[RMDB]
RNA sequence: GGGAACGACUCGAGUAGAGUCGAAAAUGUGGCAGUGGAGUUGUGCCAGAAACAGUGGCCAGUUGUAUCGCCUAUAAGACAGGGUAAGGUCUGAAGAGCUGAGCCUGUAAUUCUGCUGUAAUAAUGACGGACCAAACACAUUCGUGUGUUUGGUCCGAAAAGAAACAACAACAACAAC
Reactivity to 2A3 in 0.01 (KOAc 150mM, MgCl2 10mM, bicine 150mM(pH8.5), 24C), signal-to-noise 1, nucleotides 027 to 126: u260g000u000g030g000c050a000g090u020g000g000a000g000u120u060g090u040g000c070c000a070g100a010a220a020c060a000g130u020g000g040c000c010a000g000u000u000g080u090a000u010c000g000c000c000u040a000u080a120a000g110a020c010a070g120g100g130u180a150a000g070g000u000c050u040g040a090a000g050a000g050c210u250g000a140g300c000c010u000g040u070a150a100u010u000c000u000g020c000u000g010u010a100a100u120a060a160u070g040a000
Reactivity to DMS in 0.01 (KOAc 150mM, MgCl2 10mM, bicine 150mM(pH8.5), 24C), signal-to-noise 1, nucleotides 027 to 126: u020g020u010g000g020c080a000g100u000g000g000a000g020u000u000g000u010g010c040c040a000g110a170a100a090c200a080g020u020g000g040c000c000a030g020u040u000g000u020a050u000c000g020c030c000u000a020u000a050a040g000a060c000a040g000g000g100u010a130a250g000g000u000c000u000g000a280a070g000a080g000c060u080g000a040g020c010c000u000g000u040a040a020u000u000c000u000g000c070u000g000u000a050a010u020a110a030u000g000a300